Conditions: 150 mM KOAc, 10 mM MgCl2 and 150 mM bicine (pH 8.5), 24 C. Structure probing data (DMS and 2A3) for a 177-nucleotide construct. 2A3 adducts were read by reverse transcription with SuperScript II with manganese. The data come from the RNA Mapping Database (RMDB), library OK1LIB. The 2A3 profile rests on 11,180 reads.

RNA sequence: GGGAACGACUCGAGUAGAGUCGAAAAGGAAGACAACUCCGGGGACGCACGAGUGCAGCGUCAAUCUUCCAAGUACUCGAAGGAAGGCGAAAGACACCACGUCUUCCAACCGGAGAAGGUGUCAGAAGGGUUGCAUGUAGUUCGCUACGUGCAACCCAAAAGAAACAACAACAACAAC
Reactivity to DMS in 0.01 (KOAc 150mM, MgCl2 10mM, bicine 150mM(pH8.5), 24C), signal-to-noise 3, nucleotides 027 to 126: g010g000a080a010g010a000c070a090a100c020u000c030c000g000g000g010g030a020c040g000c030a250c070g040a140g030u000g010c150a070g000c020g000u010c010a050a160u020c000u000u010c000c000a070a130g030u030a070c000u000c020g010a120a070g000g000a010a010g010g020c000g000a110a120a050g020a020c070a020c030c060a250c030g010u000c010u050u000c010c010a050a040c020c020g000g000a020g000a110a030g010g030u010g000u000c040a060g000a090a180
Reactivity to 2A3 in 0.01 (KOAc 150mM, MgCl2 10mM, bicine 150mM(pH8.5), 24C), signal-to-noise 7, nucleotides 027 to 126: g010g010a010a000g010a030c060a100a010c110u010c010c000g010g000g020g010a010c010g020c030a040c120g150a110g220u270g080c170a040g010c040g010u000c000a010a040u000c000u020u000c000c000a020a020g090u070a140c010u000c040g030a080a020g020g000a010a000g000g000c000g060a080a050a010g030a010c000a000c020c000a000c000g000u000c000u000u000c000c000a010a000c010c000g000g020a010g020a050a190g030g010u010g000u000c010a010g090a100a090